Conditions: 150 mM KOAc, 10 mM MgCl2 and 150 mM bicine (pH 8.5), 24 C. Chemical mapping of a 207-nucleotide RNA with 2A3. Source: RMDB library RNAMAK, as collected in RNAgym.
RNA sequence: GGGAACGACUCGAGUAGAGUCGAAAAGGGGUCAAUAUGAGGAGGCGACGAUCGUGGAACUACAACUGAAGCCUCCACGGUUGCCACGGGAGCCUUGUAGUAUUGACGGAGGCACCCAAAACCAUGUCCACAUCCGUUCGCGGAUGUGGACAUGGAAGACCCAACUAAAGUUCGCUUUAGUUGGGUCAAAAGAAACAACAACAACAAC
Reactivity to 2A3 in 0.01 (KOAc 150mM, MgCl2 10mM, bicine 150mM(pH8.5), 24C), signal-to-noise 1, nucleotides 027 to 156: g120g010g010g000u010c000a000a000u010a010u080g060a090g300g110a030g000g060c020g030a270c000g000a060u000c000g000u010g000g010a080a170c090u130a080c250a020a010c010u010g020a050a000g000c000c000u030c000c000a000c000g000g000u010u010g050c030c020a030c010g000g000g000a000g000c000c000u020u050g090u070a050g030u000a000u010u000g000a000c010g000g000a000g000g000c000a050c010c010c000a020a120a000a000c000c000a000u000g010u110c000c010a060c000a000u010c050c000g060u070u140c300g000c000g260g000a000u010g000u000g010g000a000c000a000u000g010g000a000a000